[RMDB]
RNA sequence: GGGAACGACUCGAGUAGAGUCGAAAAUGUGGUGUAGAUAUGGAGCGACUAGAGCUUGGAUUUACCACUGUGUUCGGAAACGAACACAUGUUGUCAGCUCAAGUGUCGCUCCUAAGUCAGUGAAGAAUCCUAUUACGCCCUUCGGGGCGUAAUAGGAAAAAGAAACAACAACAACAAC
Reactivity to DMS in 0.01 (KOAc 150mM, MgCl2 10mM, bicine 150mM(pH8.5), 24C), signal-to-noise 1, nucleotides 027 to 126: u020g050u010g010g010u010g000u000a010g000a040u010a300u000g000g000a020g020c010g010a020c030u020a190g000a020g010c010u000u020g040g000a090u010u010u000a050c050c010a030c070u000g000u000g000u000u000c000g000g010a110a050a300c000g010a030a020c010a000c000a000u000g000u000u000g000u000c010a020g010c000u010c000a150a140g010u000g030u000c000g010c010u000c000c000u000a010a100g010u000c000a100g050u010g020a070a140g000a060a170
An RNA of 177 nucleotides, treated with DMS and read out base by base.
Reactivities are given for positions 27 through 126.
The reactions ran in a buffer of 150 mM KOAc, 10 mM MgCl2 and 150 mM bicine (pH 8.5), at 24 C.
High DMS reactivity at an A or C suggests that its Watson-Crick edge is free.